[RMDB]
RNA sequence: GGGAACGACUCGAGUAGAGUCGAAAAAGAAUUGUACCACCACUGCGUAUCCUAAACGGGCUCUGCAGUGGUUAUUCUUGUAAACUACUAGGAGUGAAUAGUGGCCCGUAUUGCAGGCAUUAACAUUAAAAGGCAAUCCACUUCGGUGGAUUGCCAACUGUUGAUUUAUGUUCGCAUAAAUCAACAGAAAAGAAACAACAACAACAAC
Reactivity to DMS in 0.01 (KOAc 150mM, MgCl2 10mM, bicine 150mM(pH8.5), 24C), signal-to-noise 2, nucleotides 027 to 156: a030g000a030a060u010u000g010u000a090c040c070a100c000c000a030c010u000g010c010g010u000a090u010c040c030u010a040a110a110c150g020g020g010c040u000c050u000g020c010a020g000u000g000g010u000u000a000u000u010c030u000u010g010u010a100a110a110c040u000a060c040u000a120g040g030a110g020u010g010a070a070u010a070g030u010g000g020c000c000c010g040u000a060u000u000g010c060a050g010g020c070a050u000u000a050a100c080a120u000u000a070a080a100a140g010g020c000a020a020u000c000c010a030c000u000u000c290g050g010u010g000g010a020u010u010g000c010c000a000a020
Reactivity to 2A3 in 0.01 (KOAc 150mM, MgCl2 10mM, bicine 150mM(pH8.5), 24C), signal-to-noise 4, nucleotides 027 to 156: a000g040a040a040u150u100g060u160a060c030c020a000c000c010a000c020u000g000c000g050u050a090u130c020c040u140a160a140a150c130g040g000g000c040u020c080u170g010c020a000g000u000g000g000u000u000a000u000u000c000u010u060g050u070a040a100a130c020u080a010c010u020a070g100g030a040g100u080g070a090a110u080a080g080u050g050g030c010c000c000g040u050a100u000u170g030c060a030g020g020c020a030u130u150a110a020c030a040u120u180a040a130a020a090g000g000c000a000a000u000c000c000a000c010u060u060c240g040g000u000g000g000a000u010u000g000c000c000a000a000